The data come from the RNA Mapping Database (RMDB), library M2PK50.
An RNA of 177 nucleotides, treated with DMS and 2A3 and read out base by base.
For DMS the reverse transcriptase was MarathonRT.
The reactions ran in a buffer of 150 mM KOAc, 10 mM MgCl2 and 150 mM bicine (pH 8.5), at 24 C.
[RMDB]
RNA sequence: GGGAACGACUCGAGUAGAGUCGAAAACAUAGGGAGUUCGCUCCCUAUGAAAAUGCCGGCUGCAAGAAAAGUGCUUCAAUGAGUGGGAGCACUGCCGAAAAAAAAGGGCGAUGUUCGCAUCGCCCAAGUUGAAUAUACCGUUCGCGGUAUAUUCAACAAAAGAAACAACAACAACAAC
Reactivity to DMS in 0.01 (KOAc 150mM, MgCl2 10mM, bicine 150mM(pH8.5), 24C), signal-to-noise 2, nucleotides 027 to 126: c000a010u000a020g000g000g010a000g020u010u010c220g030c020u000c000c010c000u000a000u000g010a050a040a040a080u000g020c080c010g010g020c050u010g010c100a110a060g000a120a110a100a060g010u000g000c000u000u000c000a050a130u000g010a160g020u020g000g000g010a000g010c000a000c010u000g020c020c030g010a010a000a010a060a040a060a140a120g000g000g030c000g020a010u000g020u010u000c170g000c000a000u000c000g010c010c000c000a000a010
Reactivity to 2A3 in 0.01 (KOAc 150mM, MgCl2 10mM, bicine 150mM(pH8.5), 24C), signal-to-noise 3, nucleotides 027 to 126: c000a000u010a000g000g000g000a010g010u050u060c100g060c050u010c010c010c000u000a000u000g000a000a000a000a020u070g070c040c020g030g000c020u050g020c090a110a050g040a150a120a020a030g010u020g000c000u010u010c020a100a200u200g090a120g250u200g040g000g010a010g010c000a000c010u010g000c010c000g040a110a020a000a010a000a010a010a020g000g000g010c000g000a000u010g010u050u070c180g000c100a010u000c000g000c010c000c000a010a000